[RMDB]
RNA sequence: GGGAACGACUCGAGUAGAGUCGAAAAUGUGGCCCUGCGACCAGGCGAUGCCCAUGCUCACACUAAUCUGGGGGCCAUACUGCAUCUGCUGGGACGCACGAAUCACGCGGCAGCUAGCUAUAAGGCGCAUCCGUAAAUCAUUCGUGAUUUACGGAUGAAAAGAAACAACAACAACAAC
Reactivity to DMS in 0.01 (KOAc 150mM, MgCl2 10mM, bicine 150mM(pH8.5), 24C), signal-to-noise 6, nucleotides 027 to 126: u020g030u000g000g000c050c020c030u020g030c040g010a230c020c010a080g000g000c090g000a030u010g010c010c210c130a080u010g000c010u010c010a060c030a060c130u010a100a120u040c300u020g000g010g010g000g000c060c120a070u010a070c170u000g010c020a020u000c010u020g020c020u000g000g000g000a100c030g000c000a050c150g020a090a130u050c110a090c080g000c040g000g020c020a090g000c050u010a070g010c010u000a060u030a090a110g000g000c060g010
Reactivity to 2A3 in 0.01 (KOAc 150mM, MgCl2 10mM, bicine 150mM(pH8.5), 24C), signal-to-noise 9, nucleotides 027 to 126: u210g010u060g060g020c000c000c010u000g020c020g010a030c010c010a030g060g050c030g030a020u060g010c010c030c020a020u100g000c000u020c010a070c000a020c070u170a070a150u190c090u070g020g000g000g000g000c010c000a020u050a030c050u060g020c000a020u010c020u150g040c010u010g030g010g080a100c010g000c010a010c050g040a040a070u100c020a030c080g030c020g030g000c020a030g000c020u050a010g010c010u060a050u050a300a090g060g000c010g000
This 177-nucleotide RNA was probed chemically with DMS and 2A3. The DMS profile rests on 13,328 reads. It was measured as part of the RMDB library OK1LIB. The RNA was probed in 150 mM KOAc, 10 mM MgCl2 and 150 mM bicine (pH 8.5) at 24 C.